RNA sequence: GGGAACGACUCGAGUAGAGUCGAAAACAGGCUAUCUAGUGUAGUCUUAAUCAUAGACAUUAGUUACAAUCAUUAACUACAGCAAUAAAUUUGUUUCCUCACAGACAAGAGAAAACCAUCAGGCAGGUGACUAAGAGCUGACACACAGAGUACCUUCGGUAUGAAGUGACUUCGGUCACUUCAUACCAAAAGAAACAACAACAACAAC
Reactivity to DMS in 0.01 (KOAc 150mM, MgCl2 10mM, bicine 150mM(pH8.5), 24C), signal-to-noise 1, nucleotides 027 to 156: c120a060g040g000c010u010a060u010c010u000a180g070u010g020u000a130g000u000c030u020u000a060a120u000c020a210u020a080g000a130c050a140u000u000a020g060u000u000a080c120a170a200u000c050a200u010u000a040a050c000u000a070c060a070g020c020a150a090u000a060a100a280u000u020u020g030u000u010u000c010c030u000c050a110c060a140g060a130c030a070a120g000a130g000a130a130a060a010c010c070a060u000c000a070g030g020c010a020g010g000u000g000a080c010u000a040a120g040a080g000c050u000g020a100c030a110c000a210c060a110g000a090g020u000a130c030c070u030u000c070
Reactivity to 2A3 in 0.01 (KOAc 150mM, MgCl2 10mM, bicine 150mM(pH8.5), 24C), signal-to-noise 3, nucleotides 027 to 156: c050a010g040g000c030u050a010u050c040u130a060g020u070g020u170a040g040u010c020u050u080a100a050u150c040a060u100a100g060a030c040a090u100u070a050g040u020u100a070c080a120a150u110c040a110u070u140a030a050c030u100a060c050a040g000c020a050a130u090a150a080a080u190u100u070g020u010u010u000c020c020u030c000a050c030a040g120a050c040a120a040g020a010g040a060a090a010a020c010c020a020u050c000a020g050g040c000a010g000g040u030g010a030c020u010a060a030g000a000g110c030u070g030a010c010a000c000a000c010a040g060a030g070u090a040c060c040u070u140c060